[RMDB]
RNA sequence: GGGAACGACUCGAGUAGAGUCGAAAAGAUGAUUCACACUUCUUUAGGCACUGGAUCAGCGCGAAGGAUGGGCAAUGUGGCCUGCCCGCAGUAUCAACUAAGGAUGGCUGCGUCUUAGGCUUACACACCCUUGUUCGGUCUUCGGACCGAACAAGGGAAAAGAAACAACAACAACAAC
Reactivity to 2A3 in 0.01 (KOAc 150mM, MgCl2 10mM, bicine 150mM(pH8.5), 24C), signal-to-noise 2, nucleotides 027 to 126: g110a110u160g000a020u060u050c000a050c000a040c110u020u050c010u070u110u230a090g020g000c020a040c100u020g060g020a050u050c070a030g000c020g000c000g050a050a100g020g040a080u090g020g000g020c000a040a060u170g000u020g080g000c010c010u010g000c000c000c000g000c000a000g000u050a090u220c030a120a110c100u260a220a040g190g000a010u000g070g000c010u010g000c000g020u000c000u010u060a000g000g000c000u120u180a010c000a000c010a020
Reactivity to DMS in 0.01 (KOAc 150mM, MgCl2 10mM, bicine 150mM(pH8.5), 24C), signal-to-noise 1, nucleotides 027 to 126: g010a060u040g080a050u010u000c000a000c170a100c070u000u010c030u030u020u020a120g000g020c110a130c060u020g000g010a000u010c060a050g000c100g000c120g000a030a090g000g020a050u020g000g010g000c050a150a160u160g010u000g000g040c020c000u000g050c060c100c020g000c000a010g000u000a010u000c000a050a050c170u040a140a110g040g020a070u000g000g000c000u000g000c000g000u000c110u000u040a060g020g020c000u070u020a090c050a170c150a100
Record summary:
Structure probing data (2A3 and DMS) for a 177-nucleotide construct. The RNA was probed in 150 mM KOAc, 10 mM MgCl2 and 150 mM bicine (pH 8.5) at 24 C. The 2A3 profile rests on 991 reads. Source: RMDB library OK1LIB, as collected in RNAgym. High 2A3 reactivity points to a flexible backbone, as in loops and unpaired stretches. The DMS profile rests on 1,470 reads.